Structure probing data (2A3 and DMS) for a 177-nucleotide construct. For DMS the reverse transcriptase was MarathonRT.
RNA sequence: GGGAACGACUCGAGUAGAGUCGAAAACGGGGAGGUAGCGGCGCCCUGUAACCCGCAAUCCGCUCUAGCGGGGUUGAAUUCCUCAUUUGAGGCAUCGUAAUUGUUUGGUCUGCCCUUGACAAGUGGUAGAUAACUCCAAUUUCGAUUGGAGUUAUCUAAAAGAAACAACAACAACAAC
Reactivity to 2A3 in 0.01 (KOAc 150mM, MgCl2 10mM, bicine 150mM(pH8.5), 24C), signal-to-noise 6, nucleotides 027 to 126: c010g020g000g000g000a020g010g020u010a010g020c010g010g000c000g010c010c000c000u030g020u040a050a060c010c000c010g000c020a030a190u040c020c020g020c010u030c050u060a020g010c010g010g000g020g010u020u070g040a050a050u080u060c010c000u030c060a130u090u080u290g070a070g000g000c010a050u060c060g040u070a110a110u100u130g090u100u080u110g040g000u030c030u020g010c020c000c000u040u090g050a060c050a120a060g030u060g120g030u040
Reactivity to DMS in 0.01 (KOAc 150mM, MgCl2 10mM, bicine 150mM(pH8.5), 24C), signal-to-noise 6, nucleotides 027 to 126: c040g000g010g000g000a060g000g010u010a070g010c020g010g000c300g000c010c000c010u020g020u000a060a080c010c010c010g010c070a050a070u020c020c010g020c020u020c300u020a110g010c000g000g000g000g010u000u000g010a130a160u010u000c010c000u000c070a190u020u010u010g010a050g000g010c110a030u010c060g010u020a060a110u000u010g000u000u010u010g000g010u000c040u000g000c020c010c040u000u000g020a110c200a040a060g010u020g000g010u010
Reactivities are given for positions 27 through 126.
It was measured as part of the RMDB libraries RFM100 and RFMREP.
Conditions: 150 mM KOAc, 10 mM MgCl2 and 150 mM bicine (pH 8.5), 24 C.
Values are in units of 0.01, from 0 to 300, in steps of 10.